RNA sequence: GGGAACGACUCGAGUAGAGUCGAAAAUCCUGGAUGGAGAGUCAACACCAUCGAAAUCCUGAAAUGGUUCGAUAUUCUCGCCAGGAAGAAGCCGAUUUCUCGCCACUUAACUCCGCACCUGAAGGCGAGUCUAAUCUUGUUUCGACAAGAUUAGACUAAAAGAAACAACAACAACAAC
Reactivity to DMS in 0.01 (KOAc 150mM, MgCl2 10mM, bicine 150mM(pH8.5), 24C), signal-to-noise 5, nucleotides 027 to 126: u000c000c000u000g010g000a060u020g020g020a010g030a040g010u000c040a050a180c300a030c030c030a020u000c050g000a060a090a120u010c110c110u010g010a110a070a010u010g000g010u000u000c300g010a050u000a060u000u000c000u000c010g010c000c010a020g000g010a050a090g010a110a130g000c040c020g000a080u000u000u000c020u000c010g010c020c030a100c110u010u010a060a120c090u000c020c030g000c050a120c050c040u010g010a090a070g010g010c060g000
Reactivity to 2A3 in 0.01 (KOAc 150mM, MgCl2 10mM, bicine 150mM(pH8.5), 24C), signal-to-noise 3, nucleotides 027 to 126: u000c000c020u000g020g000a090u210g160g010a000g020a000g040u030c020a020a030c010a010c110c000a000u000c010g010a090a060a060u110c010c020u060g030a040a110a020u040g000g000u030u050c030g000a030u000a130u160u000c010u000c000g000c000c010a000g040g000a030a040g070a030a000g050c020c020g040a050u040u080u030c070u000c010g050c010c020a070c080u180u080a110a040c040u040c030c010g010c030a060c050c000u040g070a090a010g050g010c020g030
An RNA of 177 nucleotides, treated with DMS and 2A3 and read out base by base. The RNA was probed in 150 mM KOAc, 10 mM MgCl2 and 150 mM bicine (pH 8.5) at 24 C. Values cover nucleotides 27 to 126. It was measured as part of the RMDB library OK2TST.